[RMDB]
RNA sequence: GGGAACGACUCGAGUAGAGUCGAAAACGAUAAAGGUGAAUUGAAUCUUGCUUAUUCAAGAUUAGGUAAGCAAGUGUUCGAAUUAGAAGACUUAUCAAAGGCUAUUAAUGAUAAAGUAUUAUUUGAACUAGAUGUCAUACUUCGGUAUGACAUCUAGAAAAGAAACAACAACAACAAC
Reactivity to 2A3 in 0.01 (KOAc 150mM, MgCl2 10mM, bicine 150mM(pH8.5), 24C), signal-to-noise 4, nucleotides 027 to 126: c050g060a120u160a070a170a010g150g010u060g150a040a120u120u080g030a000a000u010c010u000u000g000c000u030u040a030u050u300c060a070a060g070a300u120u300a150g040g000u000a010a000g020c000a000a020g020u050g040u100u000c030g000a070a000u030u030a010g090a200a030g050a010c000u010u010a000u010c010a050a080a000g170g000c100u060a050u280u120a220a100u120g040a040u050a040a140a040g050u000a120u220u030a150u080u180u090g040a040a010
Reactivity to DMS in 0.01 (KOAc 150mM, MgCl2 10mM, bicine 150mM(pH8.5), 24C), signal-to-noise 3, nucleotides 027 to 126: c040g000a080u060a050a080a030g000g030u010g010a070a080u030u020g000a020a000u050c000u010u000g000c000u000u020a020u010u020c020a100a090g020a240u070u060a140g020g000u010a000a000g010c000a000a010g010u030g010u000u000c020g010a030a040u020u030a130g010a080a060g000a040c010u000u000a000u000c010a050a070a150g000g000c040u010a060u010u020a090a130u000g000a020u020a030a060a070g010u010a040u020u010a120u000u020u030g010a070a210